Chemical mapping of a 177-nucleotide RNA with DMS. It was measured as part of the RMDB library OK2TRN. DMS (dimethyl sulfate) methylates the pairing face of unpaired adenines and cytosines. Values are in units of 0.01, from 0 to 300, in steps of 10. The reactions ran in a buffer of 150 mM KOAc, 10 mM MgCl2 and 150 mM bicine (pH 8.5), at 24 C.
RNA sequence: GGGAACGACUCGAGUAGAGUCGAAAAUAACUUUGCAUGAAGAAAGGGAGUGUUCUAACACGGAUAAGAUUAAUGAGUGGAUGCUCGACGCACAUGCGGCACUUCGGUUUACGGGAGGAUUUAAACCUGCACCCUACGAAUUCGUUCGUAGGGUGCAAAAAGAAACAACAACAACAAC
Reactivity to DMS in 0.01 (KOAc 150mM, MgCl2 10mM, bicine 150mM(pH8.5), 24C), signal-to-noise 1, nucleotides 027 to 126: u010a060a030c040u010u000u010g020c030a080u000g020a140a080g000a120a180a140g010g000g050a040g020u010g010u000u000c050u000a130a070c070a210c080g020g000a150u010a060a100g030a230u040u010a070a050u000g030a040g000u000g000g000a090u010g000c000u010c070g000a130c130g000c130a050c090a070u000g010c010g080g000c000a070c010u000u000c050g000g000u010u000u000a070c120g000g000g020a030g000g010a060u020u000u000a040a100a050c040c080